[RMDB]
RNA sequence: GGGAACGACUCGAGUAGAGUCGAAAACAGCUGUCUUUAUGGUAGCAGUUGUAGCAUUCCUCUGUGGGAAAGAAACUGUUACACAAUUUAAUGCCUCUUUCUUAGCCACACAGGAGGAGGAUUAUGUUGAGCCCUAGACAUUCGUGUCUAGGGCUCAAAAAGAAACAACAACAACAAC
Reactivity to 2A3 in 0.01 (KOAc 150mM, MgCl2 10mM, bicine 150mM(pH8.5), 24C), signal-to-noise 2, nucleotides 027 to 126: c000a000g050c050u050g010u130c000u060u300u240a280u100g140g000u150a000g000c000a000g000u000u000g060u020a110g080c040a000u030u020c000c000u000c140u130g170u300g060g000g060a040a000a050g030a000a220a000c070u090g000u000u000a010c050a000c050a100a100u260u150u080a090a140u160g190c000c000u000c000u000u000u000c000u000u070a110g030c110c000a090c000a000c000a050g000g000a000g000g010a000g000g050a000u000u040a240u110g060u000
Overview: Chemical mapping of a 177-nucleotide RNA with 2A3. The 2A3 profile rests on 458 reads. Source: RMDB library RFM100, as collected in RNAgym. Reactivities are given for positions 27 through 126.